[RMDB]
RNA sequence: GGGAACGACUCGAGUAGAGUCGAAAACGAGUAUCGGAUAUAGACGCAGGAUAAGUGAUGUCCCCAGCAGAAUAAGCAUCUAUUGGACAAUAGUAAAACCGGGAUACAUACUUUUGAUUAACAGCACCGUACGGAUCCGAUUCGUCGGAUCCGUACGAAAAGAAACAACAACAACAAC
Reactivity to 2A3 in 0.01 (KOAc 150mM, MgCl2 10mM, bicine 150mM(pH8.5), 24C), signal-to-noise 1, nucleotides 027 to 126: c040g000a150g000u010a010u000c000g010g130a000u000a000u000a160g090a000c000g000c060a110g130g000a090u010a030a020g000u020g100a120u020g110u090c000c000c000c000a120g000c050a000g060a220a210u050a030a030g150c000a000u070c000u100a150u020u140g070g200a000c030a020a020u150a050g060u130a000a140a000a000c000c000g040g060g000a000u000a210c000a050u030a000c000u020u120u000u000g020a060u080u040a140a010c020a050g000c030a000c030
Reactivity to DMS in 0.01 (KOAc 150mM, MgCl2 10mM, bicine 150mM(pH8.5), 24C), signal-to-noise 1, nucleotides 027 to 126: c020g000a020g020u050a080u000c000g000g090a100u000a010u000a120g050a000c000g060c020a040g000g010a120u000a030a040g000u000g050a150u010g000u080c050c010c000c100a150g100c050a100g000a080a080u000a090a000g000c150a040u000c000u000a050u020u000g000g000a070c140a020a050u000a000g000u070a060a050a220a050c110c120g010g000g020a060u010a070c020a120u000a110c010u000u000u000u060g020a240u010u010a000a040c160a020g000c080a120c230